[RMDB]
RNA sequence: GGGAACGACUCGAGUAGAGUCGAAAAAGGCACACUUCUAUAUCAUUUUACAAACAGAGUGACAGAGAGGUUCACCUCUGAGCUCUGUUAGUGAACGCAGAGCAUACAGGUGAAGCGUUGUAUGAACUGCGUUCAUAGUUCUGUGAAUGCUGUGCCACUACGAUUAGGCCUUCGGGCCUAAUCGUAGAAAAGAAACAACAACAACAAC
Reactivity to 2A3 in 0.01 (KOAc 150mM, MgCl2 10mM, bicine 150mM(pH8.5), 24C), signal-to-noise 2, nucleotides 027 to 156: a000g020g000c020a020c010a010c040u080u000c090u060a160u110a130u260c050a070u030u120u100u090a060c060a020a070a000c000a000g030a040g040u090g210a270c040a000g030a010g030a100g010g100u240u200c040a150c080c010u000c040u000g000a000g010c000u000c000u010g010u020u000a000g010u000g000a000a000c000g000c010a000g010a010g060c000a000u010a000c000a000g060g080u130g190a150a050g080c080g130u110u000g000u010a000u000g010a040a040c000u000g000c000g000u000u000c000a000u000a010g010u010u130c090u050g110u040g090a020a010u100g020c060u000g010u000g000c000c000a000